[RMDB]
RNA sequence: GGGAACGACUCGAGUAGAGUCGAAAAGCUCCAAGCUGGGCUGUGUGCCGUUCAGCCCGACCGCUGCGCCUUAUCCGGUAACUAUCGUCUUGAGUCCAACCCGGUAAAGUAGGACAGGUGCCGGCAGCGAACGAUCGACGUUCGCGUCGAUCGUUCGAAAAGAAACAACAACAACAAC
Reactivity to DMS in 0.01 (KOAc 150mM, MgCl2 10mM, bicine 150mM(pH8.5), 24C), signal-to-noise 1, nucleotides 027 to 126: g090c060u060c050c070a010a050g070c150u070g000g000g050c000u000g000u000g030u000g010c130c000g010u010u000c000a040g040c110c020c000g040a060c000c060g000c040u040g060c120g010c050c040u000u010a050u000c010c000g040g000u000a000a030c120u000a110u000c130g070u100c000u000u010g020a130g000u030c060c010a160a190c070c000c030g000g010u040a010a040a160g050u010a110g030g000a090c100a100g020g030u040g060c000c000g000g000c060a140g000
Reactivity to 2A3 in 0.01 (KOAc 150mM, MgCl2 10mM, bicine 150mM(pH8.5), 24C), signal-to-noise 2, nucleotides 027 to 126: g000c000u000c040c040a070a000g050c020u020g040g000g020c000u000g000u020g120u250g130c050c000g010u020u030c000a000g000c000c000c000g020a030c000c020g020c020u020g000c010g030c020c030u080u050a080u000c010c000g060g000u030a020a150c010u010a070u060c000g160u050c140u140u150g020a040g040u020c030c000a000a000c010c000c020g010g020u090a080a060a010g140u060a060g000g040a000c050a060g010g000u020g000c040c000g000g030c020a020g040

The record gives the reactivity of an RNA of 177 nucleotides to DMS and 2A3. The RNA was probed in 150 mM KOAc, 10 mM MgCl2 and 150 mM bicine (pH 8.5) at 24 C. The data come from the RNA Mapping Database (RMDB), library OK1LIB.